RNA sequence: GGGAACGACUCGAGUAGAGUCGAAAAGCCAGGCUGGUCUUGAACUCCUGACCUCUUUUUAGAAGUGGCAUGUCACUUCUACCGACAUUUCAUUGGCCAAAGGAAAUCAUUUGGCUAAGCCAAAAGUUAGGGGCAUCAUUUAAGAUAGUCUCCAAUACAGUACUAUAAUAUUCGUAUUAUAGUACUGAAAAGAAACAACAACAACAAC
Reactivity to DMS in 0.01 (KOAc 150mM, MgCl2 10mM, bicine 150mM(pH8.5), 24C), signal-to-noise 3, nucleotides 027 to 156: g030c000c040a100g010g020c020u000g030g030u000c030u020u010g000a130a110c020u000c000c010u000g010a050c010c020u000c040u010u000u010u010u000a040g000a040a020g050u000g020g040c170a140u010g030u000c010a030c030u000u020c020u000a110c160c050g010a060c040a130u000u000u010c090a190u010u010g000g000c010c000a010a040a050g040g030a110a080a200u000c060a100u000u000u010g010g010c000u000a020a070g000c080c030a040a040a040a090g010u010u000a020g010g010g020g000c010a080u000c030a120u010u000u000a080a110g010a080u000a080g000u000c010u010c020c010a020a110u000a240
Reactivity to 2A3 in 0.01 (KOAc 150mM, MgCl2 10mM, bicine 150mM(pH8.5), 24C), signal-to-noise 8, nucleotides 027 to 156: g060c010c000a010g010g010c020u080g000g060u030c010u030u040g020a040a030c000u020c010c000u030g060a100c000c040u060c030u060u130u050u060u100a020g010a040a000g010u020g040g020c130a120u140g100u160c000a010c010u030u010c010u040a070c030c060g180a110c060a110u140u180u120c040a050u080u160g000g000c000c000a030a020a010g080g040a110a170a160u200c120a200u020u000u020g000g000c000u010a020a030g040c020c020a050a070a010a040g050u090u090a050g000g000g010g030c020a050u090c010a010u060u160u140a050a020g000a010u020a020g020u010c020u020c070c030a050a030u130a110

Background:
The data come from the RNA Mapping Database (RMDB), library OK3TST. The record gives the reactivity of an RNA of 207 nucleotides to DMS and 2A3. High 2A3 reactivity points to a flexible backbone, as in loops and unpaired stretches. The 2A3 profile rests on 7,562 reads. For 2A3 the reverse transcriptase was SuperScript II with manganese. The RNA was probed in 150 mM KOAc, 10 mM MgCl2 and 150 mM bicine (pH 8.5) at 24 C. Reactivities are given for positions 27 through 156.